Annotation:
Structure probing data (2A3 and DMS) for a 177-nucleotide construct. Source: RMDB library M2PK50, as collected in RNAgym. For 2A3, 2,825 sequencing reads were counted. For 2A3 the reverse transcriptase was SuperScript II with manganese. Conditions: 150 mM KOAc, 10 mM MgCl2 and 150 mM bicine (pH 8.5), 24 C.
[RMDB]
RNA sequence: GGGAACGACUCGAGUAGAGUCGAAAACCGUUGCCGUUCGCGGCAACGGGAAGCAAGCAAGCAGCGCAACGAGACAAGACGAUAAUGAGAUCGCCCAUGCUGAAAAGCCACGCUUCGGCGUGGCUAAUAAGCACCAUAUAUUCGUAUAUGGUGCUUAAAAAGAAACAACAACAACAAC
Reactivity to 2A3 in 0.01 (KOAc 150mM, MgCl2 10mM, bicine 150mM(pH8.5), 24C), signal-to-noise 2, nucleotides 027 to 126: c010c000g000u010u000g010c000c020g070u060u020c230g000c010g120g040c010a000a000c000g000g000g010a010a010g020c060a040a040g000c000a080a000g000c020a010g040c030g030c090a030a060c040g030a010g040a090c040a050a070g050a030c020g030a050u080a170a080u230g090a040g030a110u020c010g030c000c000c010a020u110g020c020u080g030a070a090a030a040g000c000c030a000c000g000c010u020u090c210g040g020c000g000u000g000g000c000u000a000a000
Reactivity to DMS in 0.01 (KOAc 150mM, MgCl2 10mM, bicine 150mM(pH8.5), 24C), signal-to-noise 4, nucleotides 027 to 126: c000c000g020u000u000g010c010c000g000u000u010c210g020c020g010g000c000a000a010c000g000g010g000a040a060g020c090a060a060g000c070a080a070g000c030a040g010c080g000c050a060a040c100g020a100g000a050c070a040a070g010a070c030g000a040u000a060a090u000g010a110g010a060u000c050g000c020c010c040a090u000g000c080u000g010a070a060a070a050g000c000c000a000c000g010c000u000u020c210g020g000c010g020u010g000g000c000u000a000a020